Notes: This 177-nucleotide RNA was probed chemically with DMS and 2A3. Values cover nucleotides 27 to 126. Conditions: 150 mM KOAc, 10 mM MgCl2 and 150 mM bicine (pH 8.5), 24 C. For 2A3 the reverse transcriptase was SuperScript II with manganese. The data come from the RNA Mapping Database (RMDB), library OK1LIB.
RNA sequence: GGGAACGACUCGAGUAGAGUCGAAAAUACAGAUGAAGAAUUGUAUGAUGUAAUAAAGAUGUUUAAUUCAAUUAAUGGUGAAUGGUUACUUAGAGUAAUUUCUAAUUCCGGCCAUUAUGAUAGGGAAGCAUACCCUAUACUUCGGUAUAGGGUAUGCAAAAGAAACAACAACAACAAC
Reactivity to DMS in 0.01 (KOAc 150mM, MgCl2 10mM, bicine 150mM(pH8.5), 24C), signal-to-noise 2, nucleotides 027 to 126: u010a070c020a020g010a140u000g030a150a090g000a090a040u050u000g010u010a030u010g010a110u000g020u000a060a110u000a050a070a080g010a080u010g010u010u020u000a070a010u010u010c030a020a040u000u030a000a010u010g000g050u000g000a170a130u030g020g020u000u070a030c180u000u000a000g000a000g010u010a100a040u060u170u000c000u000a010a020u000u000c020c070g060g000c060c000a000u000u000a010u020g000a100u030a090g010g010g010a080a090
Reactivity to 2A3 in 0.01 (KOAc 150mM, MgCl2 10mM, bicine 150mM(pH8.5), 24C), signal-to-noise 3, nucleotides 027 to 126: u090a030c040a020g200a080u130g050a120a050g080a170a090u090u050g010u090a070u120g050a050u120g020u200a090a020u120a300a080a030g140a050u050g060u040u050u120a100a070u160u020c150a030a020u070u020a030a000u000g060g020u080g240a060a180u180g040g000u100u060a020c050u000u000a050g000a000g040u020a020a060u020u300u000c000u000a000a040u120u010c000c000g080g000c000c000a000u000u010a010u010g040a040u080a120g090g010g000a040a040